The record gives the reactivity of an RNA of 207 nucleotides to DMS and 2A3. For DMS the reverse transcriptase was MarathonRT. It was measured as part of the RMDB library OK3TST. The DMS profile rests on 2,090 reads. The reactions ran in a buffer of 150 mM KOAc, 10 mM MgCl2 and 150 mM bicine (pH 8.5), at 24 C.
[RMDB]
RNA sequence: GGGAACGACUCGAGUAGAGUCGAAAACGGUUAGUAUGACUUACUUGUAUAAUAAGUAUAGUUUUAAACCGAUUUUAGCAGAAUAUAUAAGACACAGAAAUACUAUAUCCGGCAAUAUUUAUUCGGCAUUGAUGACACUGGAUGAUUUGGUUAUUAACGGUAGAACUAAGUUCGCUUAGUUCUACCGAAAAGAAACAACAACAACAAC
Reactivity to DMS in 0.01 (KOAc 150mM, MgCl2 10mM, bicine 150mM(pH8.5), 24C), signal-to-noise 2, nucleotides 027 to 156: c040g030g020u010u000a160g020u010a140u000g030a090c010u000u010a040c010u010u000g000u000a150u000a180a150u000a030a020g000u020a060u000a080g000u000u010u000u010a080a140a050c020c010g020a260u000u000u000u000a130g030c000a100g000a090a050u010a050u010a040u000a070a090g000a160c030a270c140a110g000a110a100a100u010a040c110u000a080u000a080u000c070c010g000g020c080a070a100u010a040u000u000u010a060u010u000c020g000g040c050a120u000u000g020a130u000g040a050c080a060c000u010g040g010a080u010g010a150u000u000u000g000g020u000u000a100u000u000a020a300
Reactivity to 2A3 in 0.01 (KOAc 150mM, MgCl2 10mM, bicine 150mM(pH8.5), 24C), signal-to-noise 3, nucleotides 027 to 156: c020g010g000u030u030a020g070u050a080u110g020a000c000u000u010a000c010u030u020g060u060a290u110a300a220u220a150a000g000u020a070u180a130g010u000u030u000u090a060a030a000c000c000g000a020u000u080u030u040a010g000c000a030g010a090a010u050a000u030a000u030a180a060g130a020c050a010c020a110g180a090a120a020u100a040c060u070a030u010a020u270c040c010g030g000c050a060a010u020a090u150u110u050a110u060u100c030g010g010c010a000u000u100g020a030u060g000a050c010a030c070u010g000g030a020u060g030a060u050u080u100g030g050u060u080a100u060u050a060a030